[RMDB]
RNA sequence: GGGAACGACUCGAGUAGAGUCGAAAAGCGUACUACAAGUUCAACAGCUGGGAAGCAGCGAUAAGUAGGCUCCCAAAUAGGAGCCUACUUUUGACGCUGAUAACCAGACAUGAACUUGUAUCGCAAACGAUCUGUAUCGUUCGCGAUACAGAUCGAAGAAGUACUACCCGUUCGCGGGUAGUACUUCAAAAGAAACAACAACAACAAC
Reactivity to 2A3 in 0.01 (KOAc 150mM, MgCl2 10mM, bicine 150mM(pH8.5), 24C), signal-to-noise 2, nucleotides 027 to 156: g000c000g050u070a080c010u000a000c010a010a020g000u010u000c030a140a130c060a140g030c000u010g000g050g000a250a050g020c000a000g010c000g000a050u000a050a000g010u000a000g000g030c020u010c000c050c040a220a190a050u300a060g000g000a000g000c000c000u010a000c000u000u000u000u010g040a010c000g000c000u000g000a000u010a030a010c000c000a020g000a020c010a050u040g000a000a000c000u000u010g000u000a020u150c020g000c000a060a020a020c010g000a000u000c000u000g000u000a000u000c000g030u070u050c260g020c010g080a000u010a000c000a010g000a000u000c000g000a000a020
An RNA of 207 nucleotides, treated with 2A3 and read out base by base. Conditions: 150 mM KOAc, 10 mM MgCl2 and 150 mM bicine (pH 8.5), 24 C. It was measured as part of the RMDB library RNAMAK. Values cover nucleotides 27 to 156.